[RMDB]
RNA sequence: GGGAACGACUCGAGUAGAGUCGAAAAGUGGUGGGCAAAACAAGUGUUUUGUCCACUCUUGCAGUCUUCCUAGAGUAAAGUGGAGGUCUCUGUCUGCUUUAGGAGAGCCAACUAAACUGGAUCGUUCGACAAUUCCCUGAUUCGUCAGGGAAUUGUCAAAAGAAACAACAACAACAAC
Reactivity to DMS in 0.01 (KOAc 150mM, MgCl2 10mM, bicine 150mM(pH8.5), 24C), signal-to-noise 3, nucleotides 027 to 126: g020u000g010g040u000g000g020g020c010a010a000a000a000c000a300a150g000u040g010u000u000u000u000g010u020c020c000a000c000u000c000u010u010g000c140a100g010u000c050u030u020c000c000u010a030g000a040g000u040a010a060a050g020u020g010g000a080g000g020u020c110u000c010u010g000u010c050u000g000c010u000u020u000a020g000g000a040g010a030g010c040c050a110a060c060u010a030a060a040c040u030g000g000a110u000c000g000u000u010c040
Reactivity to 2A3 in 0.01 (KOAc 150mM, MgCl2 10mM, bicine 150mM(pH8.5), 24C), signal-to-noise 5, nucleotides 027 to 126: g130u170g000g000u010g000g000g010c020a000a010a000a000c090a300a130g100u120g000u300u000u000u000g000u000c000c000a000c000u000c000u000u020g050c030a060g030u000c000u070u030c000c000u000a000g000a000g040u060a030a190a030g030u060g070g060a070g050g150u100c110u030c000u130g090u040c020u020g020c000u010u040u030a010g000g010a060g020a000g030c000c020a020a080c030u120a100a000a060c050u080g050g000a050u050c010g070u060u040c040